[RMDB]
RNA sequence: GGGAACGACUCGAGUAGAGUCGAAAAUCAUCUUCGCCCGGAACCGCCAGCGAGACCUGCCCUUCUAGAUAGAAAUGGUCCUGACCGCCCAGAUACAUACGGUUCCUGAUGCGGUGCGGGGCAGCAAGUAAAUUAAAAUAUUCGUAUUUUAAUUUACAAAAGAAACAACAACAACAAC
Reactivity to 2A3 in 0.01 (KOAc 150mM, MgCl2 10mM, bicine 150mM(pH8.5), 24C), signal-to-noise 2, nucleotides 027 to 126: u030c000a000u010c030u150u100c090g030c010c000c000g100g030a040a040c020c010g060c040c030a020g000c030g070a070g000a070c000c000u040g030c030c020c000u050u040c060u070a190g030a300u120a100g060a060a110a040u070g030g000u010c020c020u030g040a010c020c020g020c000c030c010a050g050a120u130a070c060a030u140a050c080g060g020u050u000c010c010u060g010a050u160g010c000g000g030u020g070c020g010g010g020g000c010a020g080c020a120a050
Reactivity to DMS in 0.01 (KOAc 150mM, MgCl2 10mM, bicine 150mM(pH8.5), 24C), signal-to-noise 4, nucleotides 027 to 126: u020c090a090u010c060u010u010c120g010c010c020c040g020g010a300a070c050c020g010c040c050a060g020c080g000a100g000a050c040c010u000g010c160c030c020u000u000c070u000a110g000a150u020a060g000a030a080a110u010g010g010u010c020c050u000g000a070c020c020g010c030c130c040a070g010a100u000a090c110a120u020a110c090g030g010u000u000c070c000u000g000a110u000g010c030g000g020u000g000c110g000g000g010g000c030a050g020c160a040a150